Chemical mapping of a 207-nucleotide RNA with DMS and 2A3.
RNA sequence: GGGAACGACUCGAGUAGAGUCGAAAAUUACUCUUGUUAGGUGAAUGUUGAUGGUCGCCGAGCCAGUCCGUACAUCCAAAAAGGACUCUAUGUAGUAGGAAGUCGAGAGCCUAUGAGAGUUAGAGUCAUGCCUAUUUUGUGUUCGCACAAAAUAGAACAGCCAUUUGUAGUUCGCUACAAAUGGCUGAAAAGAAACAACAACAACAAC
Reactivity to DMS in 0.01 (KOAc 150mM, MgCl2 10mM, bicine 150mM(pH8.5), 24C), signal-to-noise 1, nucleotides 027 to 156: u000u000a100c020u000c030u000u010g010u010u000a070g030g000u020g000a060a100u000g010u000u010g000a090u000g000g010u000c030g030c060c070g000a260g010c030c040a110g040u010c010c040g000u010a060c040a080u010c070c030a080a080a110a090a070g000g030a050c010u000c030u000a070u000g010u010a240g000u000a010g010g020a040a100g040u010c170g020a130g010a220g000c030c010u000a020u010g010a210g010a190g050u000u000a060g000a080g000u010c030a080u010g050c070c000u000a040u000u000u000u000g010u010g000u000u000c300g030c010a030c000a010a010a030a010u010a000g010a130a220
Reactivity to 2A3 in 0.01 (KOAc 150mM, MgCl2 10mM, bicine 150mM(pH8.5), 24C), signal-to-noise 2, nucleotides 027 to 156: u060u030a050c000u020c020u060u110g070u050u100a020g000g040u020g050a090a020u050g060u190u090g070a090u040g030g060u050c030g020c100c020g000a010g020c030c010a020g090u060c020c020g000u060a050c010a060u020c050c090a030a030a060a020a050g070g010a000c000u000c000u010a130u080g040u030a030g000u010a000g000g040a070a000g030u090c080g030a020g010a000g230c000c010u010a040u040g020a020g010a000g090u010u050a000g000a000g000u000c030a030u120g020c040c000u000a000u000u000u000u000g000u000g010u010u050c150g050c130a000c000a000a010a000a000u000a000g030a020a100
Annotation:
Source: RMDB library M2RFPK, as collected in RNAgym. The RNA was probed in 150 mM KOAc, 10 mM MgCl2 and 150 mM bicine (pH 8.5) at 24 C. The 2A3 profile rests on 988 reads.